Structure probing data (DMS and 2A3) for a 177-nucleotide construct. It was measured as part of the RMDB library OK2TST. The reactions ran in a buffer of 150 mM KOAc, 10 mM MgCl2 and 150 mM bicine (pH 8.5), at 24 C.
RNA sequence: GGGAACGACUCGAGUAGAGUCGAAAACUGUGUGCAGUGUUGAGAUGCUGGUCAGCUACCUGUUGGGCCUCUUUGCCCAGAGAGCUAGAGUGUGCGGUGUCAACACCAACGACCCGUUCUGCCAGAGAUAUUCAGUACGGUUCGCCGUACUGAAUAUAAAAGAAACAACAACAACAAC
Reactivity to DMS in 0.01 (KOAc 150mM, MgCl2 10mM, bicine 150mM(pH8.5), 24C), signal-to-noise 6, nucleotides 027 to 126: c140u000g020u000g020u000g010c100a080g020u000g010u000u000g000a070g010a140u000g000c020u000g010g020u000c040a050g010c020u000a080c140c040u000g010u000u010g010g010g010c030c300u010c170u000u010u000g010c010c020c010a050g010a050g000a040g020c060u000a060g000a090g010u000g010u010g020c030g020g010u000g000u000c030a050a060c060a040c080c100a070a120c110g000a060c020c010c010g010u000u010c020u000g010c050c040a100g000a150g000
Reactivity to 2A3 in 0.01 (KOAc 150mM, MgCl2 10mM, bicine 150mM(pH8.5), 24C), signal-to-noise 4, nucleotides 027 to 126: c030u060g030u040g050u080g230c120a090g050u030g060u080u040g060a110g020a130u060g020c020u070g050g120u030c020a020g010c010u070a170c050c010u070g110u160u040g060g020g010c060c020u170c090u150u170u270g000c000c010c000a020g010a000g000a000g000c040u090a070g000a080g090u140g040u080g030c000g000g100u110g060u070c020a020a020c020a050c100c010a040a020c040g030a030c000c000c000g010u040u010c060u050g070c010c020a030g000a000g010